[RMDB]
RNA sequence: GGGAACGACUCGAGUAGAGUCGAAAAAACGCUGGGAUCCCUGUGGACUUGGAUUUAGGAAUGGGAGCCACUGAAGCGCGCACGGUGGCGAAGAACAUUCCUUGUCAGUCCACGGGAUCCUGUGCUGAAGCGCGCACGGCAACCGAAAGGUGCGAAACUCAUUCUUCACGUUCGCGUGAAGAAUGAGAAAAGAAACAACAACAACAAC
Reactivity to 2A3 in 0.01 (KOAc 150mM, MgCl2 10mM, bicine 150mM(pH8.5), 24C), signal-to-noise 2, nucleotides 027 to 156: a000a010c010g020c000u000g000g000g000a010u000c010c020c110u180g010u000g000g000a020c040u180u260g240g020a040u290u200u120a010g000g000a000a010u000g000g000g010a010g000c010c000a000c000u020g060a200a020g020c010g000c000g020c010a010c000g010g000u000g000g000c010g080a150a010g000a010a010c000a000u000u020c000c000u000u010g010u030c080a080g000u020c000c000a000c000g010g000g000a000u000c000c000u000g000u000g000c010u010g010a130a030g010c000g000c000g000c020a010c000g000g030c010a030a010c000c020g010a060a040a030g040g000u020g000c000g020a090a050a030
An RNA of 207 nucleotides, treated with 2A3 and read out base by base. Conditions: 150 mM KOAc, 10 mM MgCl2 and 150 mM bicine (pH 8.5), 24 C. The 2A3 profile rests on 2,732 reads. As a SHAPE reagent, 2A3 marks flexible, mostly unpaired nucleotides at the ribose 2'-OH.